[RMDB]
Structure probing data (DMS and 2A3) for a 177-nucleotide construct. The data come from the RNA Mapping Database (RMDB), library OK2TST. The RNA was probed in 150 mM KOAc, 10 mM MgCl2 and 150 mM bicine (pH 8.5) at 24 C. For DMS the reverse transcriptase was MarathonRT.
RNA sequence: GGGAACGACUCGAGUAGAGUCGAAAACCGCUGGAGCCGAUGAUCCGGCGGCUUUUGCGACGUUGCUACCCCUUGCACGGACAACGCAGCCAUGAAUCUGACUCAGGCGCAAACCGAACAGCUGGUCCUGCCAUAGAGUAUUCGUACUCUAUGGCAGAAAAGAAACAACAACAACAAC
Reactivity to DMS in 0.01 (KOAc 150mM, MgCl2 10mM, bicine 150mM(pH8.5), 24C), signal-to-noise 4, nucleotides 027 to 126: c010c010g010c010u000g000g000a040g010c020c200g020a120u010g010a080u010c020c030g010g010c000g000g000c060u000u000u000u000g010c030g000a150c110g010u010u010g000c030u000a170c050c020c030c080u000u010g000c070a090c080g000g000a080c060a060a090c100g020c050a080g020c020c060a070u020g000a060a090u000c100u010g000a070c070u010c040a060g000g000c010g010c080a030a080a110c060c040g000a080a090c110a070g010c040u000g000g000u000c070
Reactivity to 2A3 in 0.01 (KOAc 150mM, MgCl2 10mM, bicine 150mM(pH8.5), 24C), signal-to-noise 3, nucleotides 027 to 126: c010c000g000c030u010g030g040a020g060c060c040g160a140u100g020a030u050c010c000g040g010c000g000g020c010u120u030u010u060g030c010g030a100c100g120u160u160g020c010u050a080c000c010c000c040u010u110g000c050a020c050g020g060a020c020a060a020c090g020c050a000g030c010c030a050u100g010a070a040u040c080u090g030a060c030u030c080a030g030g000c020g000c070a000a090a040c030c020g050a080a020c020a040g040c010u030g060g010u070c030